[RMDB]
RNA sequence: GGGAACGACUCGAGUAGAGUCGAAAAGGGGUCUUCAUCGAUCUAUGUCCGUUGAACCCAGAGGCGUUGAAACUGAAGCCUCCACGGUGGAGCCUCUGCUCAGCGUGACAUAGGGAGAAGACGGAGGCACCCAAAUCUGAUCGUUCGCGAUCAGAAAGUCAUGGAGAUACUUCGGUAUCUCCAUGACAAAAGAAACAACAACAACAAC
Reactivity to 2A3 in 0.01 (KOAc 150mM, MgCl2 10mM, bicine 150mM(pH8.5), 24C), signal-to-noise 2, nucleotides 027 to 156: g000g000g010g020u010c010u000u010c010a100u070c030g000a010u000c000u010a000u010g000u000c000c000g000u000u020g020a040a030c030c020c050a020g000a020g020g000c060g160u300u140g060a110a070a050c040u050g030a230a020g080c010c030u070c100c060a060c050g020g030u010g000g030a030g000c040c020u000c000u000g000c000u000c000a020g010c040g240u300g010a010c000a000u000a000g000g000g010a070g000a040a020g030a020c140g000g000a000g000g040c010a300c040c000c000a030a080a020u030c010u000g030a000u000c010g030u080u100c300g000c030g180a000u010c020a000g030a030a080a020

An RNA of 207 nucleotides, treated with 2A3 and read out base by base.
The reactions ran in a buffer of 150 mM KOAc, 10 mM MgCl2 and 150 mM bicine (pH 8.5), at 24 C.
For 2A3, 1,133 sequencing reads were counted.